Conditions: 150 mM KOAc, 10 mM MgCl2 and 150 mM bicine (pH 8.5), 24 C.
This 177-nucleotide RNA was probed chemically with 2A3 and DMS.
The DMS profile rests on 742 reads.
For 2A3 the reverse transcriptase was SuperScript II with manganese.
[RMDB]
RNA sequence: GGGAACGACUCGAGUAGAGUCGAAAACAAAACAAAGUGUGAAAAACACGAAAGCUAGCUCGUCAGAGAGAGCACUUGAUCGAAAAGAUCUUGUGAGAUGGCUAGCGCAAAUCUCUCUCUAAAGAAAGGGUUAUCAUUACUUCGGUAAUGAUAACCCAAAAGAAACAACAACAACAAC
Reactivity to 2A3 in 0.01 (KOAc 150mM, MgCl2 10mM, bicine 150mM(pH8.5), 24C), signal-to-noise 3, nucleotides 027 to 126: c010a000a110a000a000c050a060a100a070g030u020g000u000g080a060a100a010a040a020c010a000c020g070a100a060a000g000c000u010a000g000c090u090c250g080u060c170a010g000a000g000a000g010a000g050c000a000c000u000u000g000a010u000c010g040a060a000a180a150g000a010u000c000u010u010g010u000g020a200g000a060u070g010g000c000u000a000g000c020g050c060a010a130a150u030c020u000c000u000c000u000c010u080a000a000a110g210a030a060a100
Reactivity to DMS in 0.01 (KOAc 150mM, MgCl2 10mM, bicine 150mM(pH8.5), 24C), signal-to-noise 1, nucleotides 027 to 126: c020a110a060a000a140c260a000a300a290g000u000g020u000g000a000a110a070a250a070c000a000c090g020a060a110a210g000c000u000a000g060c040u000c020g040u000c000a000g000a000g030a000g030a030g090c000a000c080u010u000g000a000u000c000g020a180a120a140a050g000a000u000c000u000u000g000u000g060a220g000a030u050g000g040c000u000a000g000c000g020c300a000a220a000u000c060u000c000u000c000u050c000u000a120a060a080g000a230a060a200
Reactivities are rounded to 0.1 and cut off at 0 and 3. Source: RMDB library OK1LIB, as collected in RNAgym.